[RMDB]
Structure probing data (DMS and 2A3) for a 177-nucleotide construct. For 2A3 the reverse transcriptase was SuperScript II with manganese. For DMS, 1,427 sequencing reads were counted. It was measured as part of the RMDB library OK2TST. For DMS the reverse transcriptase was MarathonRT. The RNA was probed in 150 mM KOAc, 10 mM MgCl2 and 150 mM bicine (pH 8.5) at 24 C.

RNA sequence: GGGAACGACUCGAGUAGAGUCGAAAACAAACCUAACAUCAGCCUGUGUGUUCCACUUUAUGUGAGAGACUAUGUUGACAAAUGGGAUGAUUUUUGCAGACAAUAUAGUAACGAGUCUUGGUUUGAAUAAGACGCACGUAUUCGUACGUGCGUCUUAAAAAGAAACAACAACAACAAC
Reactivity to DMS in 0.01 (KOAc 150mM, MgCl2 10mM, bicine 150mM(pH8.5), 24C), signal-to-noise 2, nucleotides 027 to 126: c070a040a070a170c050c000u000a090a110c190a120u010c060a030g000c000c080u020g000u000g020u000g030u000u000c040c010a040c040u000u030u020a030u010g030u000g030a130g000a050g020a030c010u000a050u000g020u000u000g000a080c080a040a090a140u010g040g010g000a200u020g000a110u000u000u000u000u000g020c070a070g000a150c050a020a060u010a060u000a150g060u000a080a100c050g040a110g010u010c010u000u000g000g020u000u000u010g010a060a090
Reactivity to 2A3 in 0.01 (KOAc 150mM, MgCl2 10mM, bicine 150mM(pH8.5), 24C), signal-to-noise 1, nucleotides 027 to 126: c010a000a070a000c000c020u040a040a010c040a030u040c030a000g080c000c020u110g020u010g050u040g000u220u000c030c000a010c040u140u110u080a140u200g070u050g030a140g010a000g000a070c000u020a020u120g040u030u050g040a020c020a000a120a050u130g000g040g110a040u060g010a040u060u010u060u060u080g080c070a020g050a070c010a010a020u040a010u040a120g000u080a120a040c050g020a020g020u030c120u060u110g110g000u000u080u110g080a070a040